[RMDB]
RNA sequence: GGGAACGACUCGAGUAGAGUCGAAAAUUGUGGCCUAACAUAUGAUUUAUACUGGAAAAUGAUUGAUGUGCAGUUGAGAAGAAUGUGUAUUCUGUACCUGUUGGAUAGAAUGUUCUGUAAAUGUUUGUUAGGUCCAUUUGGUCUAGGGUACAGUUCAACAGUUUUGUUAGUUCGCUAACAAAACUGUAAAAGAAACAACAACAACAAC
Reactivity to DMS in 0.01 (KOAc 150mM, MgCl2 10mM, bicine 150mM(pH8.5), 24C), signal-to-noise 2, nucleotides 027 to 156: u010u000g020u010g010g020c060c020u010a040a030c020a080u000a090u020g000a100u000u000u000a060u000a080c040u000g020g010a060a090a080a080u010g010a140u010u000g000a050u010g000u010g010c010a050g010u000u010g010a140g000a080a060g010a090a060u010g010u000g040u000a090u020u020c030u020g010u000a030c040c020u010g010u000u000g000g000a100u000a100g020a060a100u000g020u000u000c030u000g020u010a020a030a050u010g010u010u000u010g000u000u000a020g020g010u010c020c010a030u000u010u000g010g010u000c040u000a220g030g000g000u000a060c020a050g010u000u010c040a140
Reactivity to 2A3 in 0.01 (KOAc 150mM, MgCl2 10mM, bicine 150mM(pH8.5), 24C), signal-to-noise 3, nucleotides 027 to 156: u070u060g060u110g020g000c000c000u010a010a000c010a030u120a050u070g110a090u070u220u120a100u050a060c080u090g040g050a050a070a030a130u150g040a150u170u160g060a060u080g070u040g050c050a030g020u080u070g080a090g020a130a040g020a080a060u080g070u020g030u070a100u120u060c010u030g010u040a030c000c000u060g050u190u120g120g000a000u020a050g110a070a060u040g060u100u030c050u010g050u020a040a070a130u090g100u120u030u030g000u020u050a000g000g030u030c000c000a000u030u090u090g060g020u000c020u070a030g000g000g030u040a060c020a020g020u040u040c020a030